Overview:
This 177-nucleotide RNA was probed chemically with DMS. The DMS profile rests on 758 reads.

[RMDB]
RNA sequence: GGGAACGACUCGAGUAGAGUCGAAAAAAUUUAGAUUAUCCAGGUCUAGCGGUGAAAUUCGUAGAGAUCUGGUGGAUAAUGAACCGGUGGCGAAGGCGAAAGAUAACCGCUGAAAUGCUGAAGUGAAGAAGAAAAACAGGUUCGCCUGUUUUUCUUCAAAAGAAACAACAACAACAAC
Reactivity to DMS in 0.01 (KOAc 150mM, MgCl2 10mM, bicine 150mM(pH8.5), 24C), signal-to-noise 1, nucleotides 027 to 126: a060a020u000u000u010a090g010a150u010u000a040u000c000c010a020g020g010u000c000u000a120g020c040g010g020u000g000a100a070a180u000u010c030g020u000a080g000a010g000a010u000c030u000g010g000u000g000g010a140u010a040a110u010g000a140a100c080c020g000g000u020g000g010c070g020a100a150g010g000c000g010a050a070a060g000a150u030a100a090c060c040g010c030u000g000a050a030a280u000g000c030u000g010a090a110g020u000g010a060a110
The reactions ran in a buffer of 150 mM KOAc, 10 mM MgCl2 and 150 mM bicine (pH 8.5), at 24 C.